[RMDB]
RNA sequence: GGGAACGACUCGAGUAGAGUCGAAAACAUCUUUCCUCCCUACACAGUGACUCCAGCUUGGGAGGGGCAGGGCUAGGCUGAGCCACCACUCCCUGUGGUGUCUGCCUGCCACGUGCAGCUCUGGAGUAAAACCUGGAGAAGUUCGCUUCUCCAGGAAUCACGUAUACAGCUUCGGCUGUAUACGUGAAAAAGAAACAACAACAACAAC
Reactivity to 2A3 in 0.01 (KOAc 150mM, MgCl2 10mM, bicine 150mM(pH8.5), 24C), signal-to-noise 2, nucleotides 027 to 156: c050a070u080c110u090u090u010c010c010u100c000c000c000u140a090c200a030c030a250g080u060g110a030c000u000c000c000a030g000c030u060u050g000g000g000a000g020g000g000g000c000a010g010g030g010c040u170a000g000g000c020u030g100a000g060c040c000a000c010c010a020c040u130c060c170c020u030g000u000g010g000u020g000u000c020u010g000c000c000u000g030c000c030a080c030g140u060g010c020a030g020c000u000c020u100g010g000a000g020u020a010a040a000a030c000c000u010g000g000a010g000a000a000g010u020u150c200g040c140u010u000c000u000c030c000a000g000g000a000a000